[RMDB]
RNA sequence: GGGAACGACUCGAGUAGAGUCGAAAAAAUGCCGCCUCAGUUCCAAGCUCUUUCGUGGCACUGUAAACAGUCCUAUUGAGUUAGGGGCAGUCAACCACGUUGCGAAGCUAAAUUAUCUAGUCGAGAGUUACGAUUCCCUACUUCGGUAGGGAAUCAAGUUAUCCUUAAAGUUCGCUUUAAGGAUAACAAAAGAAACAACAACAACAAC
Reactivity to DMS in 0.01 (KOAc 150mM, MgCl2 10mM, bicine 150mM(pH8.5), 24C), signal-to-noise 2, nucleotides 027 to 156: a070a090u000g020c030c020g000c050c020u000c000a130g010u010u020c030c010a140a300g010c000u000c010u010u020u000c040g030u000g020g020c050a060c020u000g000u000a030a120a090c050a170g010u010c000c010u000a050u000u010g040a290g030u010u010a040g000g010g010g000c020a020g020u000c040a090a030c010c010a050c050g010u010u010g020c090g050a080a070g000c010u000a020a060a060u000u000a100u000c060u010a070g000u000c070g000a090g010a170g010u000u000a100c080g010a060u000u000c000c000c000u000a000c000u000u000c240g070g000u000a010g010g020g000a000a000u000c000a000a120
Reactivity to 2A3 in 0.01 (KOAc 150mM, MgCl2 10mM, bicine 150mM(pH8.5), 24C), signal-to-noise 6, nucleotides 027 to 156: a000a010u100g020c040c020g030c020c010u050c030a070g030u060u020c040c010a020a030g000c000u000c010u030u050u030c030g010u020g010g000c090a010c020u010g070u100a060a110a140c040a090g110u100c000c000u030a030u060u150g120a180g270u050u050a030g000g000g010g010c010a000g010u030c020a020a060c010c010a020c030g010u020u030g060c080g060a050a030g010c030u060a050a090a080u240u150a130u090c080u050a030g070u050c050g040a010g010a000g160u070u080a070c070g000a000u000u000c000c000c000u000a000c000u000u060c170g090g000u000a000g010g000g000a000a000u000c000a000a000
An RNA of 207 nucleotides, treated with DMS and 2A3 and read out base by base. For 2A3 the reverse transcriptase was SuperScript II with manganese.